[RMDB]
RNA sequence: GGGAACGACUCGAGUAGAGUCGAAAACUUCGCAUUGGUAUUGGAUAAUUAAUGUGUAGGAUAGGUCGGAGACAUUGAAGCAGGCACGCUAGUGUUUGUGGAGUCGCCCUUGAAAUACGACCCUUUGCUUAUAGUGUCCGUUCGCGGACACUAUAAGAAAAGAAACAACAACAACAAC
Reactivity to DMS in 0.01 (KOAc 150mM, MgCl2 10mM, bicine 150mM(pH8.5), 24C), signal-to-noise 4, nucleotides 027 to 126: c020u000u000c020g020c010a020u010u000g000g010u010a080u010u040g010g000a140u030a040a070u010u010a010a020u000g010u000g010u010a030g010g000a180u040a030g000g000u000c000g020g010a180g000a010c040a150u010u030g000a170a120g000c030a010g010g000c000a010c000g010c250u070a110g020u000g010u000u000u000g020u000g010g000a030g010u000c010g010c050c030c020u030u000g000a020a050a070u010a070c030g000a020c000c010c080u000u000u000g000
Reactivity to 2A3 in 0.01 (KOAc 150mM, MgCl2 10mM, bicine 150mM(pH8.5), 24C), signal-to-noise 6, nucleotides 027 to 126: c000u050u040c000g000c010a010u000u020g040g030u100a090u120u160g190g110a130u170a200a030u110u020a020a010u030g010u010g040u050a010g030g030a050u050a080g010g010u000c010g020g020a060g020a050c040a050u110u190g010a000a000g000c010a010g010g000c010a000c030g080c130u120a100g000u000g000u010u010u010g020u020g000g020a020g000u000c000g030c010c000c000u010u060g060a040a040a000u090a030c010g010a020c000c000c010u010u020u060g020
This 177-nucleotide RNA was probed chemically with DMS and 2A3. Conditions: 150 mM KOAc, 10 mM MgCl2 and 150 mM bicine (pH 8.5), 24 C. 2A3 adducts were read by reverse transcription with SuperScript II with manganese.